The data come from the RNA Mapping Database (RMDB), library OK1LIB. An RNA of 177 nucleotides, treated with DMS and 2A3 and read out base by base.
RNA sequence: GGGAACGACUCGAGUAGAGUCGAAAAGAGCGUCGAGAGACGAAGAGAAGUGCAUUGAUCCACAACGGAGAACGUAAUAAUGCACUCAUGUGGGUUAGUGUCCGGAACAACGGGCACAAGAGGCAGAAAUAUAUUAGGGCUUCGGCCCUAAUAUAUUAAAAGAAACAACAACAACAAC
Reactivity to DMS in 0.01 (KOAc 150mM, MgCl2 10mM, bicine 150mM(pH8.5), 24C), signal-to-noise 9, nucleotides 027 to 126: g010a100g000c010g010u000c000g000a230g000a250g010a020c000g020a130a080g000a140g010a120a040g010u010g000c000a010u000u000g010a150u000c010c020a100c150a080a100c140g000g010a100g010a120a130c110g010u030a100a070u040a030a020u000g010c020a020c000u010c040a070u010g000u000g000g000g020u000u000a080g010u000g010u000c000c000g000g000a150a130c300a130a170c000g000g000g000c000a000c000a040a040g000a070g000g000c050a060g010a100
Reactivity to 2A3 in 0.01 (KOAc 150mM, MgCl2 10mM, bicine 150mM(pH8.5), 24C), signal-to-noise 6, nucleotides 027 to 126: g080a010g010c010g010u000c010g010a020g010a010g000a070c060g050a070a010g050a020g060a230a000g000u030g000c000a020u000u020g050a040u070c000c010a050c050a220a120c180g070g000a080g020a160a050c080g030u050a030a050u080a130a020u100g000c010a020c010u010c010a050u080g020u060g020g040g010u050u100a060g000u010g000u000c000c010g030g020a070a070c100a060a030c050g000g010g020c000a000c000a000a020g050a030g060g020c030a010g110a080

For DMS the reverse transcriptase was MarathonRT.